Structure probing data (2A3 and DMS) for a 177-nucleotide construct. The RNA was probed in 150 mM KOAc, 10 mM MgCl2 and 150 mM bicine (pH 8.5) at 24 C.

RNA sequence: GGGAACGACUCGAGUAGAGUCGAAAAGCAGCACUCCAUAUCUCUACUAUGGCACUUCGUCAGGAUCCUAUCAGUUUCCCAUGGUGCCGGGGGGAGACCGGUCUCCUUCCAGAAUGCUUCCGCCAUGAACGUGGAGAUAUUUCGAUAUCUCCACGUUAAAAGAAACAACAACAACAAC
Reactivity to 2A3 in 0.01 (KOAc 150mM, MgCl2 10mM, bicine 150mM(pH8.5), 24C), signal-to-noise 2, nucleotides 027 to 126: g010c030a000g030c010a020c040u000c000c010a020u020a090u060c040u000c020u050a110c010u050a130u090g020g010c030a020c070u080u050c070g070u030c030a010g050g030a050u010c000c010u050a110u120c060a050g010u010u010u010c020c000c000a020u050g020g000u020g010c050c060g000g000g000g000g000g000a010g000a020c040c070g300g010u020c000u000c000c000u020u000c020c010a030g050a110a050u110g040c030u080u000c040c000g000c020c000a040u070g040
Reactivity to DMS in 0.01 (KOAc 150mM, MgCl2 10mM, bicine 150mM(pH8.5), 24C), signal-to-noise 4, nucleotides 027 to 126: g010c080a070g010c050a070c040u000c030c020a060u010a050u000c030u010c040u000a100c100u000a080u010g010g000c060a070c100u000u000c080g000u020c050a060g000g010a090u000c030c010u000a060u000c120a100g000u000u000u000c010c000c000a070u000g000g010u000g000c040c050g000g010g000g000g000g000a020g000a050c130c140g020g020u000c010u000c010c000u000u000c010c020a050g000a080a080u000g010c060u000u000c060c040g020c040c040a050u000g010